[RMDB]
RNA sequence: GGGAACGACUCGAGUAGAGUCGAAAAGAAGAAAGCUCUCAAUCUCCAGUAUCUGAAGGCCAUGCAAGUCUCGAUUCCGUUGCUUUGUUUAACUCUCAGCGCUGGACGUCUUACUUACGGGAAGGGCUUGAUGACGAGCACGUAGAUUUUGUCGGCGCAGCCAGAAAUACUUCGGUAUUUCUGGCUGAAAAGAAACAACAACAACAAC
Reactivity to 2A3 in 0.01 (KOAc 150mM, MgCl2 10mM, bicine 150mM(pH8.5), 24C), signal-to-noise 4, nucleotides 027 to 156: g060a030a000g050a010a140a030g020c000u020c020u030c070a060a100u030c030u030c040c030a020g020u040a110u110c030u050g050a090a050g060g000c040c020a030u130g020c030a040a030g040u010c030u020c050g180a260u180u000c080c030g020u030u040g000c010u130u070u060g030u030u120u040a060a030c010u030c000u000c040a010g000c010g000c020u020g040g000a010c020g020u000c020u040u090a140c020u070u040a020c080g050g030g040a030a030g030g040g000c000u040u040g030a060u090g050a040c070g020a010g000c020a020c090g040u050a040g000a150u030u070u050u120g040u040c010g030g000c050g000
Reactivity to DMS in 0.01 (KOAc 150mM, MgCl2 10mM, bicine 150mM(pH8.5), 24C), signal-to-noise 2, nucleotides 027 to 156: g030a120a150g010a100a070a110g010c030u000c040u000c030a090a130u000c050u000c020c010a080g010u010a040u000c010u000g020a030a060g030g020c020c010a090u000g000c040a040a090g010u000c020u010c030g010a200u000u000c080c030g020u000u000g000c040u010u000u010g020u010u000u010a050a090c070u000c010u000c020a090g030c130g000c030u000g000g020a050c060g020u000c040u000u000a080c060u000u010a110c050g000g020g020a070a110g000g000g020c010u010u000g010a100u000g020a130c020g020a060g050c020a070c050g000u010a060g000a130u000u000u000u000g030u000c010g020g020c040g010